The record gives the reactivity of an RNA of 207 nucleotides to 2A3 and DMS. The RNA was probed in 150 mM KOAc, 10 mM MgCl2 and 150 mM bicine (pH 8.5) at 24 C. Source: RMDB library OK3TST, as collected in RNAgym.
RNA sequence: GGGAACGACUCGAGUAGAGUCGAAAAUGUCUGGUGGUACCACUAUGUAUCCCGGUAUUGCCGAUCGUAUGCAAAAGGAGAUUCAAGCCCUUGCUCCUAGCUCCAUGAAGGUCAAGAUUGUUGCUCCUCCUGAGCGUAAAUACUCUGUCUGGAUUGAAUAAUGACUGGGUUUCGACCCAGUCAUUAUAAAAGAAACAACAACAACAAC
Reactivity to 2A3 in 0.01 (KOAc 150mM, MgCl2 10mM, bicine 150mM(pH8.5), 24C), signal-to-noise 1, nucleotides 027 to 156: u150g020u060c020u100g000g000u000g020g000u050a020c000c060a050c160u190a120u300g150u110a250u130c030c020c000g000g000u050a000u000u000g010c010c000g040a090u140c110g060u120a030u110g070c040a080a110a000a040g010g000a010g000a030u160u110c030a030a080g010c000c020c000u030u030g060c090u010c010c000u010a030g000c020u030c070c030a100u150g030a070a010g020g020u020c010a000a030g020a100u050u170g090u050u070g060c000u010c020c010u120c000c040u040g000a020g000c020g010u010a000a090a000u100a030c040u060c090u090g050u040c000u020g090g000a130u140u060g060a090
Reactivity to DMS in 0.01 (KOAc 150mM, MgCl2 10mM, bicine 150mM(pH8.5), 24C), signal-to-noise 1, nucleotides 027 to 156: u030g030u010c070u010g070g050u000g000g020u010a040c060c100a180c130u000a050u000g040u000a110u020c040c000c030g040g050u020a020u000u000g040c030c000g050a070u010c050g050u010a070u000g040c030a070a040a160a140g010g000a040g000a120u000u000c070a020a170g000c060c000c020u000u000g010c020u000c020c000u000a120g020c050u020c020c070a100u000g000a060a100g030g000u010c020a060a130g010a180u000u000g040u000u000g010c010u010c160c020u010c010c080u000g000a130g000c030g030u010a040a090a180u010a030c010u000c020u000g010u000c080u010g020g000a090u010u000g000a120